An RNA of 207 nucleotides, treated with 2A3 and DMS and read out base by base. The DMS profile rests on 2,956 reads. It was measured as part of the RMDB library OK3TST. The 2A3 profile rests on 1,015 reads. The RNA was probed in 150 mM KOAc, 10 mM MgCl2 and 150 mM bicine (pH 8.5) at 24 C. For DMS the reverse transcriptase was MarathonRT. 2A3 adducts were read by reverse transcription with SuperScript II with manganese.
RNA sequence: GGGAACGACUCGAGUAGAGUCGAAAAGCCAACCCAGCCUGGGGUGGGGAGUGGAGCAGGUAUGAGAUCCGGAGUGACCACAGCCUUUGGAUUGGGCAUGUGAGUGCCGAAGAUGAGGGAACGUACACCUGUGUGGCGGAGAACAGUGUGGGCCGCGCUAGACCAUCUUAUUCGUAAGAUGGUCUAGAAAAGAAACAACAACAACAAC
Reactivity to 2A3 in 0.01 (KOAc 150mM, MgCl2 10mM, bicine 150mM(pH8.5), 24C), signal-to-noise 2, nucleotides 027 to 156: g030c000c000a040a030c030c000c000a030g040c000c060u100g020g000g000g020u080g010g000g010g040a050g030u130g010g040a030g060c130a050g080g000u130a110u130g070a060g010a050u030c030c110g030g020a050g010u040g130a030c020c000a010c020a020g040c010c000u100u110u080g090g000a100u100u130g040g010g000c050a090u010g040u030g040a060g010u050g020c030c030g050a150a030g020a020u040g030a040g010g000g000a070a000c060g030u080a030c010a030c060c020u060g000u030g000u030g050g020c000g000g040a030g000a060a030c050a010g030u030g000u020g070g010g000c010c000g030c010g000
Reactivity to DMS in 0.01 (KOAc 150mM, MgCl2 10mM, bicine 150mM(pH8.5), 24C), signal-to-noise 1, nucleotides 027 to 156: g010c030c010a080a110c020c000c000a200g020c110c050u000g000g000g000g030u010g000g000g020g040a140g050u000g010g000a160g000c080a060g010g060u010a110u000g000a090g000a080u000c020c020g020g000a170g020u030g020a120c010c020a030c050a140g000c040c020u010u000u000g060g000a230u000u000g010g000g030c000a050u000g020u030g000a180g030u000g000c000c020g030a080a100g010a090u000g010a100g030g010g000a090a070c080g020u000a080c060a100c050c050u040g010u000g000u010g010g000c040g000g010a040g000a050a100c060a100g010u010g050u000g000g010g000c020c010g000c050g020